Notes
An RNA of 207 nucleotides, treated with 2A3 and DMS and read out base by base. It was measured as part of the RMDB library OK3TST. DMS adducts were read by reverse transcription with MarathonRT. For 2A3, 1,861 sequencing reads were counted. For 2A3 the reverse transcriptase was SuperScript II with manganese.

RNA sequence: GGGAACGACUCGAGUAGAGUCGAAAACUUGAGGUGGUGGGGCGUCUUGGCAAUCGUCCCGAUCCACACGCCACCCGCAACAACGUAAUAAAUAUUUUCGCCUUCCUCUUGAUAAAUCUCAAUGGUCUUGUCCAUGGUCGGAUUAUUUACCGGCUUCACUUACGCGUUAUUUCGAUAACGCGUAAGUAAAAGAAACAACAACAACAAC
Reactivity to 2A3 in 0.01 (KOAc 150mM, MgCl2 10mM, bicine 150mM(pH8.5), 24C), signal-to-noise 3, nucleotides 027 to 156: c040u060u130g070a040g040g010u020g000g030u050g000g010g000g010c030g000u050c060u060u060g010g020c040a030a040u040c020g020u040c030c020c020g030a090u070c030c020a040c010a010c060g020c000c010a070c000c020c010g030c030a040a070c020a020a010c090g130u170a060a060u070a100a130a070u170a110u090u130u120u200c100g000c010c000u040u050c020c020u050c000u040u050g050a040u120a170a150a120u070c130u050c090a020a110u080g000g040u010c040u120u110g040u020c020c030a030u040g000g000u010c010g010g020a050u090u080a110u130u300u040a070c000c000g000g000c000u110u050c020
Reactivity to DMS in 0.01 (KOAc 150mM, MgCl2 10mM, bicine 150mM(pH8.5), 24C), signal-to-noise 1, nucleotides 027 to 156: c080u000u000g000a030g000g030u010g040g040u000g000g000g020g010c030g040u000c050u000u000g010g040c050a210a100u000c060g000u000c030c000c010g030a080u010c050c050a060c070a030c040g030c040c010a070c030c000c000g020c090a110a110c030a080a070c010g010u000a110a140u030a090a070a180u000a080u000u000u000u000c060g020c010c010u000u000c020c040u000c040u010u000g010a120u000a030a050a090u000c020u000c050a150a060u020g000g000u000c080u000u020g000u000c000c010a080u000g010g050u000c030g010g030a200u000u000a120u000u000u010a140c000c030g040g030c030u000u000c020